This 177-nucleotide RNA was probed chemically with 2A3 and DMS.
2A3 adducts were read by reverse transcription with SuperScript II with manganese.
RNA sequence: GGGAACGACUCGAGUAGAGUCGAAAACGCAUCGUUGGGCCAGAUCUGCCUGGUCUUGCAGAUGCCCACGAUGGUGGCCUCUGACACGACGACUGGGCAGUGCCGGUGACGCUUAUGGCACUGCGGCGCCCCUCAUCCUUUUCGAAGGAUGAGGGGCAAAAGAAACAACAACAACAAC
Reactivity to 2A3 in 0.01 (KOAc 150mM, MgCl2 10mM, bicine 150mM(pH8.5), 24C), signal-to-noise 1, nucleotides 027 to 126: c030g010c020a000u010c000g060u100u270g030g020g000c040c020a140g020a240u040c000u010g040c020c040u090g020g090u060c020u000u030g010c000a000g000a060u040g000c000c000c020a030c010g030a030u020g110g040u090g000g040c030c000u000c030u060g110a060c010a010c060g130a000c070g030a010c020u100g010g040g030c010a010g000u010g000c000c020g130g070u120g120a070c060g000c080u240u160a100u110g000g000c000a000c020u000g010c000g030g030c020
Reactivity to DMS in 0.01 (KOAc 150mM, MgCl2 10mM, bicine 150mM(pH8.5), 24C), signal-to-noise 2, nucleotides 027 to 126: c090g010c010a020u000c010g040u000u010g050g000g020c040c300a050g030a110u000c020u010g000c030c060u020g000g000u010c160u000u000g020c000a000g000a010u000g000c060c000c000a020c020g000a020u000g010g000u000g000g010c020c050u010c070u000g000a060c080a070c080g000a100c030g000a070c100u000g020g000g000c000a060g000u000g000c020c000g000g020u010g010a110c160g030c190u000u020a100u000g000g000c010a000c020u000g020c020g010g040c130